This 207-nucleotide RNA was probed chemically with 2A3 and DMS. The DMS profile rests on 2,921 reads. 2A3 adducts were read by reverse transcription with SuperScript II with manganese. The reactions ran in a buffer of 150 mM KOAc, 10 mM MgCl2 and 150 mM bicine (pH 8.5), at 24 C.
RNA sequence: GGGAACGACUCGAGUAGAGUCGAAAACAAGCACUGCUUUGGAGAGGUUAGGGGGGAGGCUGCCUAGGUUAUUGCAGGCACCUUUGGAGGCUGGUAAUUAUCACCCACAAUUUAUCUGCUGGGAUGGGAAGUGACUUGCCCAAGGUCACAGAGAAACGAUGAUAACGAAAUUCGUUUCGUUAUCAUCAAAAGAAACAACAACAACAAC
Reactivity to 2A3 in 0.01 (KOAc 150mM, MgCl2 10mM, bicine 150mM(pH8.5), 24C), signal-to-noise 3, nucleotides 027 to 156: c040a010a010g040c020a030c130u100g000c030u100u040u080g040g030a070g000a020g030g010u090u120a050g000g040g010g020g000g020a010g020g000c060u030g010c000c010u030a050g080g050u100u150a110u030u210g030c010a020g020g010c020a030c000c000u040u040u050g050g000a040g030g000c020u010g000g050u040a080a090u060u080a030u120c030a050c050c010c000a030c010a030a030u050u160u140a150u070c020u020g050c040u000g030g050g030a070u050g030g000g050a090a040g030u030g030a020c000u020u110g020c000c000c020a010a020g010g000u000c010a000c030a010g070a000g000a050a060a000c060
Reactivity to DMS in 0.01 (KOAc 150mM, MgCl2 10mM, bicine 150mM(pH8.5), 24C), signal-to-noise 2, nucleotides 027 to 156: c020a120a150g000c010a100c080u000g010c030u000u000u030g000g000a110g010a260g020g000u000u000a100g030g040g030g020g060g030a040g030g000c060u000g080c020c040u030a020g030g030u030u000a080u010u010g040c030a050g000g000c000a060c040c020u000u020u020g010g040a080g000g010c040u000g020g030u010a030a070u000u000a090u000c070a100c000c010c010a090c040a050a090u000u000u000a110u040c100u010g010c030u000g050g010g010a120u000g010g000g020a080a210g020u000g000a020c040u000u010g000c020c000c030a150a080g010g020u000c010a030c000a180g030a150g000a060a060a150c190